An RNA of 177 nucleotides, treated with 2A3 and DMS and read out base by base.

[RMDB]
RNA sequence: GGGAACGACUCGAGUAGAGUCGAAAAGGUGAGCACCGAGGUAACUGCCACCGACCUGCCGGUCACCGGCCGCAUUCCGGAACACCUCGACGGGCGUUAUCUGCGUAACGGCCCCAACCCGGUCGCGGCCGAUAUUCAGUUUCGACUGAAUAUCGGCAAAAGAAACAACAACAACAAC
Reactivity to 2A3 in 0.01 (KOAc 150mM, MgCl2 10mM, bicine 150mM(pH8.5), 24C), signal-to-noise 1, nucleotides 027 to 126: g020g030u030g030a090g010c010a010c070c090g040a020g000g000u040a120a040c050u040g000c000c010a000c000c000g040a050c010c010u010g030c020c030g090g000u180c070a110c230c000g020g020c000c000g000c060a170u160u000c000c020g000g020a080a020c000a000c060c000u010c030g000a050c110g000g030g010c010g010u010u030a010u100c170u270g140c030g090u110a020a010c010g300g050c010c010c000c000a010a040c070c000c000g010g000u040c080g000c020g020
Reactivity to DMS in 0.01 (KOAc 150mM, MgCl2 10mM, bicine 150mM(pH8.5), 24C), signal-to-noise 2, nucleotides 027 to 126: g010g010u010g000a140g010c020a090c110c050g000a050g010g000u000a060a050c080u000g000c000c010a030c030c000g040a140c030c020u010g050c050c020g000g000u010c090a150c150c030g010g010c000c020g010c020a150u010u000c000c010g000g000a050a120c100a040c010c020u000c020g000a210c300g000g020g010c000g010u010u000a040u000c090u020g000c250g000u000a020a010c010g000g030c010c000c010c210a090a070c140c020c020g010g010u000c070g020c030g010
Values cover nucleotides 27 to 126. For 2A3 the reverse transcriptase was SuperScript II with manganese. The data come from the RNA Mapping Database (RMDB), library OK2TRN. For DMS, 1,739 sequencing reads were counted.